This 177-nucleotide RNA was probed chemically with DMS and 2A3. Values cover nucleotides 27 to 126. 2A3 adducts were read by reverse transcription with SuperScript II with manganese. Source: RMDB library RFMREP, as collected in RNAgym. DMS adducts were read by reverse transcription with MarathonRT. The RNA was probed in 150 mM KOAc, 10 mM MgCl2 and 150 mM bicine (pH 8.5) at 24 C.
[RMDB]
RNA sequence: GGGAACGACUCGAGUAGAGUCGAAAACGGCCUCACCGCCCUCGACGCGAGGACGGUCCGCCGUAGGGCAAACCUUCCGCGCCACACCGCCCGAACCCGACAGCUAACCCGGUAGGCGGAGCACUGGGUGUUAAUAAUACUUCGGUAUUAUUAACACAAAAGAAACAACAACAACAAC
Reactivity to DMS in 0.01 (KOAc 150mM, MgCl2 10mM, bicine 150mM(pH8.5), 24C), signal-to-noise 6, nucleotides 027 to 126: c030g010g020c010c080u010c190a070c020c010g000c020c010c000u000c010g010a210c240g010c110g020a020g010g010a010c010g010g000u010c170c300g000c030c000g020u000a070g010g000g030c060a080a070a090c070c060u000u010c030c020g010c050g010c050c070a090c120a090c070c040g010c020c000c020g000a070a090c050c020c010g000a100c120a070g010c090u000a100a140c040c030c010g020g010u000a080g010g020c040g020g010a070g020c140a060c080u010g010g010
Reactivity to 2A3 in 0.01 (KOAc 150mM, MgCl2 10mM, bicine 150mM(pH8.5), 24C), signal-to-noise 5, nucleotides 027 to 126: c010g020g000c010c020u070c070a040c010c010g020c000c030c010u010c010g300a290c140g050c140g170a010g010g000a010c010g000g020u010c010c020g000c000c000g020u060a070g000g010g020c030a040a080a190c010c000u090u050c020c010g040c010g060c050c010a100c020a020c010c040g010c000c000c000g020a040a040c000c000c010g030a050c020a040g030c030u090a070a070c010c000c020g020g030u030a040g000g060c030g030g010a030g010c030a020c090u080g180g010